[RMDB]
RNA sequence: GGGAACGACUCGAGUAGAGUCGAAAACAGCGGCUACAACAUGAACCCUGUCUUCAUAUACUUGGUGCCGAAGCCCUGCCCCCGCGUGCGUAUCGUGCUCCCAGGUUUGUGCGCUCGGCCGGUACGCCAGGACUGCAUUAUUCGUAAUGCAGUCCUGAAAAGAAACAACAACAACAAC
Reactivity to 2A3 in 0.01 (KOAc 150mM, MgCl2 10mM, bicine 150mM(pH8.5), 24C), signal-to-noise 2, nucleotides 027 to 126: c010a030g040c050g030g000c020u130a040c040a150a020c010a120u070g050a070a030c040c000c070u090g070u060c050u070u020c030a050u110a010u020a190c020u010u040g030g020u030g040c010c020g020a020a010g060c000c010c000u030g030c010c020c010c000c010g060c030g050u060g000c010g000u010a020u040c000g080u150g020c030u040c020c020c000a010g080g000u090u160u110g100u060g010c050g020c000u030c000g000g000c020c010g000g000u010a000c000g000c030
Reactivity to DMS in 0.01 (KOAc 150mM, MgCl2 10mM, bicine 150mM(pH8.5), 24C), signal-to-noise 4, nucleotides 027 to 126: c090a070g010c120g030g000c030u000a100c110a090a070c200a050u010g000a080a080c060c070c060u010g010u010c070u000u010c080a060u000a100u000a060c120u000u000g010g010u000g010c040c040g000a080a110g010c020c010c020u000g000c030c010c000c020c030g020c150g010u000g020c010g010u000a000u000c010g000u010g010c030u010c020c020c020a130g000g020u000u000u000g020u000g000c020g020c080u000c100g000g010c010c000g000g000u000a010c020g010c020

This 177-nucleotide RNA was probed chemically with 2A3 and DMS. The data come from the RNA Mapping Database (RMDB), library OK2TRN. For 2A3, 2,835 sequencing reads were counted.